[RMDB]
RNA sequence: GGGAACGACUCGAGUAGAGUCGAAAAAACUCACGAACGAGGAAGAGGGAGGAAUUGUGGUUCAUGUCACAUUGCGGCAUCAAGAAGGAUGGAAUCUUCAUCCCAAAACUCGAACCAGAGCGCAUUGGACUCCAGACAGAUUCGUCUGUCUGGAGUCAAAAGAAACAACAACAACAAC
Reactivity to DMS in 0.01 (KOAc 150mM, MgCl2 10mM, bicine 150mM(pH8.5), 24C), signal-to-noise 2, nucleotides 027 to 126: a020a030c000u000c010a190c180g000a070a180c110g000a020g000g010a110a030g000a130g040g000g000a030g000g010a110a020u020u030g050u000g000g020u000u000c060a100u000g000u000c000a070c000a070u020u010g030c060g000g120c110a110u040c090a110a040g000a100a060g020g000a030u030g000g010a090a100u070c050u000u040c000a050u000c000c000c070a010a020a150a070c070u030c010g040a060a080c050c040a090g040a050g000c120g000c050a140u050u020g000
Reactivity to 2A3 in 0.01 (KOAc 150mM, MgCl2 10mM, bicine 150mM(pH8.5), 24C), signal-to-noise 3, nucleotides 027 to 126: a000a000c040u060c010a070c110g140a200a020c060g000a030g050g030a110a080g010a090g080g020g000a100g040g070a050a060u120u090g030u070g060g100u080u130c100a080u300g060u050c030a000c020a150u040u170g070c110g030g020c050a040u030c020a050a020g090a110a040g070g010a050u050g010g130a080a070u020c060u060u000c020a000u010c000c010c010a000a010a000a060c010u030c020g000a000a000c040c020a030g000a010g030c050g030c030a000u020u160g060